Structure probing data (2A3 and DMS) for a 207-nucleotide construct. For DMS the reverse transcriptase was MarathonRT. High 2A3 reactivity points to a flexible backbone, as in loops and unpaired stretches. Source: RMDB library RNAMAK, as collected in RNAgym. The DMS profile rests on 3,806 reads. For 2A3, 1,497 sequencing reads were counted.

RNA sequence: GGGAACGACUCGAGUAGAGUCGAAAAGGGGUCCAGUCGUUGAAAGAUGGCAGGCAUCGAUCUUAUGACGACUAUUCGGUAUACUGAAGCCUCCACGGUAUACCGAAUAGUCGUCAUAAGGGAGCCUGACCAUCUGGAGACUGGACGGAGGCACCCACGAAUUCAAUGAGUUCGCUCAUUGAAUUCGAAAAGAAACAACAACAACAAC
Reactivity to 2A3 in 0.01 (KOAc 150mM, MgCl2 10mM, bicine 150mM(pH8.5), 24C), signal-to-noise 1, nucleotides 027 to 156: g140g010g050g010u000c000c010a000g020u010c010g070u100u110g150a160a110a000g000a010u000g000g010c000a000g010g000c060a190u110c090g210a200u050c060u000u000a000u000g010a000c000g000a000c000u000a010u000u000c010g000g000u000a000u030a000c000u010g040a170a060g040c010c020u000c020c000a020c010g010g000u010a000u010a020c040c010g000a000a000u000a000g000u000c000g020u000c000a000u000a000a000g000g020g000a000g000c010c000u010g010a040c000c010a000u020c000u000g000g000a040g000a010c000u000g010g000a000c000g000g010a000g000g040c000a040c020c000c000a020
Reactivity to DMS in 0.01 (KOAc 150mM, MgCl2 10mM, bicine 150mM(pH8.5), 24C), signal-to-noise 1, nucleotides 027 to 156: g000g010g050g010u010c000c010a030g010u000c020g000u010u000g000a220a160a100g010a010u000g020g030c020a020g000g000c010a190u000c100g010a090u010c030u000u000a010u000g000a030c000g000a050c010u000a000u000u000c010g030g000u000a010u000a010c020u000g010a070a110g010c030c000u010c030c050a300c020g010g030u000a020u000a000c030c010g000a000a010u000a000g000u000c000g000u000c000a010u000a010a030g010g000g000a150g010c020c000u000g000a120c000c010a010u000c010u010g010g010a300g000a040c020u010g000g000a010c000g010g020a030g020g010c030a160c020c000c020a300